[RMDB]
About this RNA: The record gives the reactivity of an RNA of 177 nucleotides to 2A3 and DMS. The DMS profile rests on 1,035 reads. Reactivities are rounded to 0.1 and cut off at 0 and 3. The reactions ran in a buffer of 150 mM KOAc, 10 mM MgCl2 and 150 mM bicine (pH 8.5), at 24 C.
RNA sequence: GGGAACGACUCGAGUAGAGUCGAAAAACAUCUUUCUACCAUUUCAUUCAUCCAUUGCGGGCCUUGUAAUUGAAUGAUCUUGGGCAGCUCGUCUAGCCCUUCCAGCAGGCCAUCUUCAUUAACGAUCCAUAAUGCCUGCGUUCGCGCAGGCAUUAUGAAAAGAAACAACAACAACAAC
Reactivity to 2A3 in 0.01 (KOAc 150mM, MgCl2 10mM, bicine 150mM(pH8.5), 24C), signal-to-noise 3, nucleotides 027 to 126: a000c030a080u100c050u050u110u000c010u050a090c030c000a040u000u000u020c050a070u000u040c010a000u040c040c000a110u050u110g080c090g010g020g010c000c000u150u140g040u130a130a090u070u070g050a020a020u060g020a030u050c020u040u020g010g010g000c030a020g020c000u050c110g130u060c060u010a070g010c000c000c000u000u020c030c000a020g000c000a000g040g060c000c000a060u010c030u120u080c030a060u030u170a050a030c070g050a050u040c030
Reactivity to DMS in 0.01 (KOAc 150mM, MgCl2 10mM, bicine 150mM(pH8.5), 24C), signal-to-noise 1, nucleotides 027 to 126: a040c080a010u030c070u000u000u030c010u000a090c140c040a020u000u000u000c000a000u000u000c070a090u030c300c070a070u000u000g000c160g030g000g060c050c110u040u000g000u000a040a120u000u060g000a000a030u000g000a190u000c090u000u000g020g000g000c090a030g000c120u000c230g050u000c050u000a010g100c000c010c000u000u100c020c040a040g000c230a080g010g000c000c070a000u000c060u000u010c010a050u000u000a000a060c090g000a200u000c070